[RMDB]
RNA sequence: GGGAACGACUCGAGUAGAGUCGAAAAAAGGGUCCAAGCAUCUCGCUCUCCUCUCUCUGCUCCCUGCUCACCCUCCCCUCCCAGGCCUCUGCAUCCCUUUCCCUGGUGGAGCCAAACUACCGCAGGGAAUUGAUACUCCGUUCGCGGAGUAUCAAUUAAAAGAAACAACAACAACAAC
Reactivity to DMS in 0.01 (KOAc 150mM, MgCl2 10mM, bicine 150mM(pH8.5), 24C), signal-to-noise 4, nucleotides 027 to 126: a070a030g000g020g030u000c040c060a090a120g010c060a080u030c070u010c070g020c040u000c030u010c020c020u000c040u000c060u000c050u010g010c050u000c000c010c020u000g000c080u000c050a100c050c020c010u000c010c020c010c020u000c020c010c030a100g010g010c040c010u000c010u010g020c070a080u010c030c010c010u000u000u000c000c000c000u010g010g030u030g030g010a060g020c070c170a050a060a150c100u020a080c030c030g000c020a030g010g000g000
Reactivity to 2A3 in 0.01 (KOAc 150mM, MgCl2 10mM, bicine 150mM(pH8.5), 24C), signal-to-noise 4, nucleotides 027 to 126: a000a020g070g000g000u040c040c010a030a020g040c010a060u050c020u040c050g000c010u030c000u030c010c000u040c000u000c000u010c030u030g020c020u020c000c010c000u000g020c010u030c010a050c010c010c000u010c010c010c000c000u020c000c000c020a010g030g000c000c000u030c020u020g010c020a090u060c000c000c000u020u050u030c020c000c000u030g040g040u090g030g020a010g020c050c040a080a070a030c040u150a150c010c020g000c070a030g040g000g000
The record gives the reactivity of an RNA of 177 nucleotides to DMS and 2A3. Source: RMDB libraries RFM100 and RFMREP, as collected in RNAgym. 2A3 adducts were read by reverse transcription with SuperScript II with manganese.